[RMDB]
RNA sequence: GGGAACGACUCGAGUAGAGUCGAAAAAAGGAAAAGGGACAUUGGGUUCGCGAUUGCCCGAAACGACCCCGGAAGAAACCCGCAGACUCCACUCUCCUCAACCUAGAAGAUUAGGAGAGUCAGGGCCUAUCUAUGCGGGAUUCGUCCCGCAUAGAUAAAAAGAAACAACAACAACAAC
Reactivity to DMS in 0.01 (KOAc 150mM, MgCl2 10mM, bicine 150mM(pH8.5), 24C), signal-to-noise 3, nucleotides 027 to 126: a100a020g040g000a090a040a120a080g000g010g010a080c110a110u020u030g020g000g010u020u010c020g020c110g000a110u020u010g000c010c010c010g000a050a240a240c100g000a060c070c000c000c020g020g020a130a100g000a090a100a110c040c020c010g000c190a090g000a110c050u020c030c170a070c020u010c000u000c000c000u010c160a020a030c070c030u030a120g000a160a150g000a110u010u010a010g010g000a070g020a010g000u000c140a120g000g000g000c050c170
Reactivity to 2A3 in 0.01 (KOAc 150mM, MgCl2 10mM, bicine 150mM(pH8.5), 24C), signal-to-noise 3, nucleotides 027 to 126: a000a000g160g010a060a120a040a020g060g000g000a090c070a040u130u140g060g020g030u120u100c020g000c000g130a120u090u200g040c000c000c000g020a050a070a030c000g050a070c000c000c030c000g040g000a140a030g060a050a200a010c000c000c030g000c040a010g050a110c020u000c030c010a040c010u030c000u020c000c030u050c050a040a150c030c010u210a160g050a230a010g010a230u060u120a000g000g000a010g010a010g010u010c020a010g000g000g000c000c000
The data come from the RNA Mapping Database (RMDB), library OK1LIB. Chemical mapping of a 177-nucleotide RNA with DMS and 2A3. In probing experiments dimethyl sulfate is read out at A N1 and C N3, which are open when not base-paired. The RNA was probed in 150 mM KOAc, 10 mM MgCl2 and 150 mM bicine (pH 8.5) at 24 C. For DMS the reverse transcriptase was MarathonRT. For DMS, 3,334 sequencing reads were counted.